[RMDB]
The record gives the reactivity of an RNA of 207 nucleotides to 2A3. For 2A3, 1,413 sequencing reads were counted. For 2A3 the reverse transcriptase was SuperScript II with manganese. Values cover nucleotides 27 to 156.
RNA sequence: GGGAACGACUCGAGUAGAGUCGAAAAUCCUGAGACCGGGGAGCUUCGACGAUCUCUUGUCUCUCCUGAAGGAGGAAGGAGCUCUCGAACGCUCUCCCGACCGCUCGGAUGGGCCGCUUCCGGCAAGAGGGGCCGAAAGUGUGAAGGGAGAGACCGCCUACCGAUGGAAGUUCGCUUCCAUCGGUAGAAAAGAAACAACAACAACAAC
Reactivity to 2A3 in 0.01 (KOAc 150mM, MgCl2 10mM, bicine 150mM(pH8.5), 24C), signal-to-noise 2, nucleotides 027 to 156: u010c010c030u060g010a030g020a060c020c060g000g000g000g010a010g000c000u010u020c020g010a040c170g010a040u010c000u000c040u070u020g300u080c050u060c020u090c140c000u240g240a300a170g060g000a020g000g000a000a030g000g000a000g000c020u000c000u010c000g000a010a000c060g000c000u030c080u070c000c000c000g000a000c010c010g050c010u010c020g030g040a060u060g030g040g000c050c020g000c020u040u010c020c010g000g020c000a050a030g060a030g040g040g020g010c000c010g040a040a070a020g050u070g020u050g080a070a060g070g000g000a100g010a020g010a080c030c030g010c020